Chemical mapping of a 207-nucleotide RNA with 2A3 and DMS.

RNA sequence: GGGAACGACUCGAGUAGAGUCGAAAAGCCGCCAUCGGCAGCAUGGACAGCAGCCCGUUGACCAGCUGCAGGUCGCUGAUCGAGCGGGAGACCACCUGGCCGGUGCGCAGCGAGUCCUGCUUGCCGCCGUCGAGGCGCUGCACCGAGCCGAACACGGGGUCAUAUUAAGUUUCGACUUAAUAUGACCAAAAGAAACAACAACAACAAC
Reactivity to 2A3 in 0.01 (KOAc 150mM, MgCl2 10mM, bicine 150mM(pH8.5), 24C), signal-to-noise 3, nucleotides 027 to 156: g040c000c010g000c040c020a120u040c000g030g000c020a020g020c010a100u210g130g020a020c030a030g000c000a010g000c010c000c040g120u100u150g080a180c080c030a020g000c000u030g010c040a040g060g070u030c030g000c000u040g010a260u080c030g040a010g000c000g000g050g010a080g060a050c000c040a010c020c080u070g040g000c010c020g000g000u020g010c020g000c020a030g000c020g040a020g070u110c010c030u010g010c020u040u120g050c040c030g010c010c000g040u090c120g000a060g020g010c000g000c050u080g000c000a010c000c000g020a050g000c010c010g080a060a040c050a030c120g260g000
Reactivity to DMS in 0.01 (KOAc 150mM, MgCl2 10mM, bicine 150mM(pH8.5), 24C), signal-to-noise 1, nucleotides 027 to 156: g030c000c020g010c010c020a110u030c020g080g000c020a060g000c050a050u000g040g030a300c050a180g030c000a130g010c010c000c110g000u000u000g000a100c080c020a080g000c010u010g010c000a110g030g040u000c040g000c010u000g000a090u000c060g000a090g040c010g020g020g000a090g010a080c030c030a120c060c000u000g000g040c010c020g040g030u000g010c020g030c060a040g000c070g030a070g040u000c080c040u000g050c000u000u000g060c030c050g060c000c050g020u010c040g050a190g010g020c000g010c060u040g000c000a080c030c020g000a060g000c010c010g030a030a060c060a300c030g010g000

Source: RMDB library OK3TST, as collected in RNAgym. Values are in units of 0.01, from 0 to 300, in steps of 10. 2A3 adducts were read by reverse transcription with SuperScript II with manganese. The reactions ran in a buffer of 150 mM KOAc, 10 mM MgCl2 and 150 mM bicine (pH 8.5), at 24 C.